[RMDB]
RNA sequence: GGGAACGACUCGAGUAGAGUCGAAAAACGAGAGGGGAACUGCAAGCUCCUUCAACUGGUUCUGUCCGGUGAGAAGUGAUCAAGCUUGGGCUGACAAGAGGCUCAGGGAGCCCUCACGUUCUUUCGCUGCUCUCCGUAGUUUCGACUACGGAGAGCAAAAAGAAACAACAACAACAAC
Reactivity to 2A3 in 0.01 (KOAc 150mM, MgCl2 10mM, bicine 150mM(pH8.5), 24C), signal-to-noise 2, nucleotides 027 to 126: a010c020g000a010g000a010g080g000g030g000a000a040c070u060g080c020a000a130g010c020u030c000c000u000u010c040a000a010c000u000g070g000u160u130c000u150g190u060c020c000g030g000u000g050a300g070a010a050g100u090g170a100u070c190a090a030g040c000u010u020g000g000g000c000u000g000a070c040a020a130g060a060g130g000c060u050c020a010g020g010g040a080g280c000c000c000u000c020a020c040g000u010u070c000u000u000u020c020g010c070
Reactivity to DMS in 0.01 (KOAc 150mM, MgCl2 10mM, bicine 150mM(pH8.5), 24C), signal-to-noise 1, nucleotides 027 to 126: a020c040g040a030g020a050g000g000g000g000a160a190c010u000g010c070a120a260g000c070u000c010c000u020u000c000a220a030c000u060g000g010u000u010c240u010g020u020c010c000g030g000u040g000a130g010a010a030g000u050g000a090u030c080a140a100g000c000u000u000g010g010g000c010u000g010a300c180a120a080g050a070g010g010c000u010c010a030g040g000g000a230g030c000c000c000u000c000a120c010g000u020u000c080u010u000u000c050g000c160